The record gives the reactivity of an RNA of 177 nucleotides to DMS.

RNA sequence: GGGAACGACUCGAGUAGAGUCGAAAAAGUUUAGAUUUCGAUCUAAACUAGACCACUAAGAGGAUGACGAGUGACUACGACGCAUCUAGUAGAAUGCGCGCAGCUGUGAGCAGUUCGCUGCUCACAACUAGGCCUGUUACUUCGGUAACAGGCCUAGAAAAGAAACAACAACAACAAC
Reactivity to DMS in 0.01 (KOAc 150mM, MgCl2 10mM, bicine 150mM(pH8.5), 24C), signal-to-noise 1, nucleotides 027 to 126: a020g020u000u010u000a000g000a010u000u000u000c200g000a010u000c000u000a000a000a010c000u000a060g000a250c000c020a140c110u030a070a190g010a080g000g010a060u010g000a050c110g000a050g010u000g000a120c000u020a020c080g010a190c080g000c010a000u000c000u000a300g020u000a140g000a040a010u000g020c000g020c070g000c090a040g030c070u000g000u010g000a020g000c000a000g000u000u030c260g050c000u000g010c000u000c000a000c010a010a090

For DMS, 681 sequencing reads were counted. Reactivities are given for positions 27 through 126. For DMS the reverse transcriptase was MarathonRT.